Source: RMDB library M2RFOK, as collected in RNAgym. The record gives the reactivity of an RNA of 207 nucleotides to 2A3. Values cover nucleotides 27 to 156.

RNA sequence: GGGAACGACUCGAGUAGAGUCGAAAAACUGCCAUACGUGGCAGAAACACGCCUUACCAGGACUAAACAGCGUGUCUAAAAAACAGCCCUUCAUACCUGAUCUGGAGGGUAGAUCAGGAAUACUAAAAAAAUCGGGUGAAGUUCGCUUCACCCGAAACAUUGAAAUUCCCUUCGGGGAAUUUCAAUGAAAAGAAACAACAACAACAAC
Reactivity to 2A3 in 0.01 (KOAc 150mM, MgCl2 10mM, bicine 150mM(pH8.5), 24C), signal-to-noise 1, nucleotides 027 to 156: a000c000u000g000c010c000a010u010a050c170g130u030g000g000c000a000g060a000a020a000c010a000c020g030c020c020u060u090a120c010c050a090g030g020a060c140u280a140a190a040c030a010g000c000g000u000g020u040c100u110a130a080a000a000a000a000c060a030g040c000c000c000u060u090c020a120u110a170c000c000u000g000a000u000c000u010g020g060a050g080g000g080u020a000g000a000u020c020a000g000g040a010a040u060a100c090u240a160a000a040a060a010a040a080u020c000g000g010g010u000g000a000a000g000u070u120c070g020c050u010u000c000a000c000c000c000g000a000a000a000
Conditions: 150 mM KOAc, 10 mM MgCl2 and 150 mM bicine (pH 8.5), 24 C. For 2A3, 531 sequencing reads were counted.